Chemical mapping of a 207-nucleotide RNA with 2A3. The reactions ran in a buffer of 150 mM KOAc, 10 mM MgCl2 and 150 mM bicine (pH 8.5), at 24 C. It was measured as part of the RMDB library OK3TST. Values cover nucleotides 27 to 156.

[RMDB]
RNA sequence: GGGAACGACUCGAGUAGAGUCGAAAAGCGUUGGAUCAACACGAGGCCGAGCCGGGGUGCGCAGCUUGCCUUGACGCUGCUGCCCUUCGUGCUGCUGAUCGUCGCCUAUGCUUUCGGCUCGGCGGCGCGACUGGCGGAAAACGCCAACGACAAAUUGAGCGUCUUCACUAUUCGUAGUGAAGACGCUAAAAGAAACAACAACAACAAC
Reactivity to 2A3 in 0.01 (KOAc 150mM, MgCl2 10mM, bicine 150mM(pH8.5), 24C), signal-to-noise 1, nucleotides 027 to 156: g000c010g010u050u000g010g050a090u080c130a060a040c010a040c060g040a030g200g000c120c050g090a070g010c000c000g060g000g000g010u030g210c050g020c000a000g000c000u110u300g060c000c090u060u170g110a120c240g000c000u000g000c040u040g040c010c010c000u090u090c000g040u030g030c000u040g000c010u030g030a110u030c010g000u000c000g000c030c030u250a300u300g000c060u000u060u180c000g010g000c000u000c000g020g020c010g000g030c030g010c010g030a050c130u090g000g010c000g000g000a020a270a000a000c080g030c030c000a010a020c010g040a050c030a000a050a100u090u270g090